Chemical mapping of a 207-nucleotide RNA with 2A3. Values cover nucleotides 27 to 156. It was measured as part of the RMDB library ARCHII. 2A3 adducts were read by reverse transcription with SuperScript II with manganese.
[RMDB]
RNA sequence: GGGAACGACUCGAGUAGAGUCGAAAAGCCUCGCUGCCCAAAUGAAAUUUAGAGGAUAAGGCAUUGGUUGGUGGUUCAGGUCUUGCCAAUGCUCGAAAACCAAAGGCUGAAAUAAGCAUGUAGAAAGCGUAUGGUUUCCUUGUGCGGACCGGAGUUCGAACCAUGGAUAGUUCGCUAUCCAUGGUUCAAAAGAAACAACAACAACAAC
Reactivity to 2A3 in 0.01 (KOAc 150mM, MgCl2 10mM, bicine 150mM(pH8.5), 24C), signal-to-noise 1, nucleotides 027 to 156: g010c000c040u060c030g030c050u100g020c010c000c000a000a160a050u190g090a130a020a040u180u190u100a130g010a040g000g000a010u040a020a070g050g000c050a060u040u050g000g000u020u050g030g000u080g000g010u000u070c020a020g000g130u000c000u050u150g000c000c010a000a000u000g010c000u030c040g010a020a030a030a040c010c030a000a070a000g060g000c000u040g020a000a000a090u200a130a000g130c060a050u190g020u080a060g100a070a190a000g020c020g000u030a050u100g070g000u000u000u040c000c020u060u030g050u080g010c020g020g050a030c000c050g000g010a030g030u040u140c090